[RMDB]
RNA sequence: GGGAACGACUCGAGUAGAGUCGAAAAAAUUUCUGUUCAACAAACUAAGUGAACGAAAGGUAUACGAAUGUAUCAAACAGUUUGGUAUUAGAAUCAAGGAUCUCCGAACGUAUGGAGUCAAUUAUACGUUUUUAUAUAAUUUUUGGACAAAUGUAAACAACACGACAUAAUUCGUUAUGUCGUGUUGAAAAGAAACAACAACAACAAC
Reactivity to 2A3 in 0.01 (KOAc 150mM, MgCl2 10mM, bicine 150mM(pH8.5), 24C), signal-to-noise 1, nucleotides 027 to 156: a000a010u080u050u000c040u110g030u020u020c010a030a000c030a150a130a090c110u230a210a040g010u010g060a020a000c020g080a050a090a020g030g020u130a050u040a100c070g070a200a060u170g000u070a020u090c100a060a030a110c020a090g020u000u010u070g000g010u080a100u060u100a010g080a100a040u130c050a060a020g050g030a100u020c070u000c030c000g030a010a000c020g020u030a040u030g000g040a010g010u020c000a000a010u030u080a020u000a010c000g000u000u000u000u130u000a120u020a020u030a080a110u010u120u050u180u040g040g050a020c000a000a070a110u220g000u100a150a010a010
Reactivity to DMS in 0.01 (KOAc 150mM, MgCl2 10mM, bicine 150mM(pH8.5), 24C), signal-to-noise 1, nucleotides 027 to 156: a090a120u000u000u010c000u030g030u000u000c010a070a060c010a050a010a060c030u000a110a180g030u000g020a060a120c070g010a100a060a120g010g030u000a010u000a210c070g000a220a120u010g010u000a030u000c030a070a090a100c080a050g000u000u020u000g010g020u010a050u000u000a030g000a050a040u000c060a070a100g000g010a080u010c000u010c000c010g030a050a030c070g000u000a030u000g040g030a050g010u010c100a020a020u000u000a040u000a020c030g010u000u000u000u010u010a060u010a170u020a170a130u010u000u000u010u000g000g030a140c090a050a060a080u000g010u000a050a040a180
An RNA of 207 nucleotides, treated with 2A3 and DMS and read out base by base. The DMS profile rests on 2,204 reads. It was measured as part of the RMDB library OK3TST. 2A3 adducts were read by reverse transcription with SuperScript II with manganese.